[RMDB]
RNA sequence: GGGAACGACUCGAGUAGAGUCGAAAAGAUAUGGAGGUGCCCAGGGAGAAUGGAUUCGGAAACGAAUCCCAUUCUUUGAUCUGGAGCACCUCCUAAGUCAAAACGUCUUAUGUUCGCAUAAGACGAACGGUGUAGAUAACUUCGGUUAUCUACACCGAAAAGAAACAACAACAACAAC
Reactivity to 2A3 in 0.01 (KOAc 150mM, MgCl2 10mM, bicine 150mM(pH8.5), 24C), signal-to-noise 3, nucleotides 027 to 126: g020a020u070a020u150g000g000a000g020g010u010g000c000c020c010a000g030g030g010a070g010a010a010u020g000g000a000u010u010c010g020g040a050a110a080c020g010a010a010u030c080c070c020a000u000u000c000u200u130u100g060a050u030c000u000g010g010a240g020c010a000c000c000u000c000c000u000a020a000g000u020c000a000a010a050a120c020g010u000c010u010u010a010u010g040u070u100c300g000c120a010u020a020a000g000a000c020g010a060a020
Reactivity to DMS in 0.01 (KOAc 150mM, MgCl2 10mM, bicine 150mM(pH8.5), 24C), signal-to-noise 3, nucleotides 027 to 126: g000a040u010a300u000g000g010a020g020g010u000g020c000c000c000a030g000g020g000a000g020a020a010u000g000g000a050u010u010c010g010g000a120a100a220c020g010a030a000u000c130c070c030a000u000u000c000u010u000u000g000a060u010c030u010g000g000a180g020c000a000c000c000u000c000c000u000a000a090g000u000c040a130a060a170a260c040g000u000c000u000u000a000u000g000u000u040c280g000c020a010u000a010a020g000a010c010g010a020a050
Chemical mapping of a 177-nucleotide RNA with 2A3 and DMS. The RNA was probed in 150 mM KOAc, 10 mM MgCl2 and 150 mM bicine (pH 8.5) at 24 C.